This 177-nucleotide RNA was probed chemically with 2A3 and DMS. For 2A3, 28,045 sequencing reads were counted. The RNA was probed in 150 mM KOAc, 10 mM MgCl2 and 150 mM bicine (pH 8.5) at 24 C.
[RMDB]
RNA sequence: GGGAACGACUCGAGUAGAGUCGAAAAACAAAUCACACCGAUAACAGCGAAUAUCACGCUAAUGUCGGUUUUAACGUUAAGCCUGUAAAACGAGAUGGUAAGAUGAGCGUGAUGUUUGAUCCAGACAAGGUGCAUAAAUAUUCGUAUUUAUGCACCUAAAAGAAACAACAACAACAAC
Reactivity to 2A3 in 0.01 (KOAc 150mM, MgCl2 10mM, bicine 150mM(pH8.5), 24C), signal-to-noise 9, nucleotides 027 to 126: a000c030a000a130a020u060c020a020c010a010c030c020g020a020u040a070a040c040a030g030c000g080a120a030u130a060u200c060a020c040g010c010u040a040a040u090g020u020c000g000g000u020u010u020u030a020a000c010g010u010u030a060a010g030c000c020u070g120u170a030a040a060a070c100g040a070g020a250u100g070g020u050a050a030g040a070u060g040a010g050c050g010u010g000a010u020g030u010u030u030g040a040u020c010c020a010g050a110c050a080
Reactivity to DMS in 0.01 (KOAc 150mM, MgCl2 10mM, bicine 150mM(pH8.5), 24C), signal-to-noise 9, nucleotides 027 to 126: a060c050a060a090a080u010c070a080c130a100c030c020g010a030u000a050a080c290a040g010c020g000a100a090u010a090u010c170a060c010g010c000u000a050a230u000g010u000c010g000g000u000u000u010u000a060a110c080g010u000u010a060a210g010c040c020u000g010u000a050a050a060a090c110g000a100g000a070u000g010g010u000a040a190g010a050u000g000a060g010c080g030u000g010a040u000g010u000u000u000g000a080u010c040c030a100g010a100c230a080